[RMDB]
RNA sequence: GGGAACGACUCGAGUAGAGUCGAAAACAUAAUCUUCAGGGCAGGGUGAAAUUCCCGAUCGGCGGUAAAGUCCGCGAGCCGAACGAAAAAGGUUUGGCAGGAACCGGUGAGAUUCCGGUACCGACAGCAAAGCCUCAACACUUCGGUGUUGAGGCAAGAUCAAGAAUGUAUUCGUACAUUCUUGAUCAAAAGAAACAACAACAACAAC
Reactivity to DMS in 0.01 (KOAc 150mM, MgCl2 10mM, bicine 150mM(pH8.5), 24C), signal-to-noise 2, nucleotides 027 to 156: c010a180u010a100a070u010c050u030u000c070a090g040g010g030c050a100g000g050g030u000g000a050a120a300u010u000c000c000c000g000a070u000c000g030g010c010g000g000u000a070a230a030g000u010c020c000g000c000g010a190g000c000c000g000a000a050c020g000a050a100a130a200a160g020g000u020u000u000g020g030c000a020g050g010a040a000c000c020g000g000u010g010a240g000a300u000u000c010c020g010g000u010a010c000c020g000a040c050a080g020c070a060a090a200g020c010c010u000c010a020a030c020a010c010u010u000c300g060g010u020g040u000u010g020a000g020g030c000a000a000
Reactivity to 2A3 in 0.01 (KOAc 150mM, MgCl2 10mM, bicine 150mM(pH8.5), 24C), signal-to-noise 2, nucleotides 027 to 156: c010a010u230a160a090u120c050u170u110c070a050g040g050g060c050a030g010g020g000u010g020a020a010a040u080u020c020c010c030g010a100u180c010g000g000c000g000g000u000a000a000a000g000u000c000c010g000c000g000a010g000c000c000g000a000a000c010g110a110a020a050a040a060g100g000u010u000u000g000g000c010a010g020g000a000a010c000c000g010g000u000g000a010g000a000u000u000c000c000g000g010u000a000c000c000g010a010c000a000g070c010a080a080a000g000c000c000u000c000a000a000c000a000c030u070u110c230g100g000u000g000u010u000g010a000g000g000c000a000a000

Conditions: 150 mM KOAc, 10 mM MgCl2 and 150 mM bicine (pH 8.5), 24 C. The record gives the reactivity of an RNA of 207 nucleotides to DMS and 2A3. For DMS the reverse transcriptase was MarathonRT.